[RMDB]
RNA sequence: GGGAACGACUCGAGUAGAGUCGAAAAGAUAUGGAUCAGGUAGUGAGUCCGAAGAACAGGGUCGGAAACGACCCUGGGAGGACCCUACUGAUCCUAAGUCAAAUCAACCCGGUUCGCCGGGUUGAAAGUGAAGAUUGUAGUUCGCUACAAUCUUCACAAAAGAAACAACAACAACAAC
Reactivity to DMS in 0.01 (KOAc 150mM, MgCl2 10mM, bicine 150mM(pH8.5), 24C), signal-to-noise 1, nucleotides 027 to 126: g020a020u000a300u000g010g000a020u000c000a050g020g000u010a030g010u010g010a190g060u020c000c010g010a180a160g030a150a300c000a000g000g000g030u000c010g030g010a130a170a210c020g050a040c000c010c000u000g000g000g020a130g010g010a020c010c000c000u010a030c000u020g000a020u020c010c010u000a010a130g000u010c020a100a140a300u010c010a010a020c020c000c010g010g060u000u020c300g050c000c000g000g000g000u020u000g000a000a000a100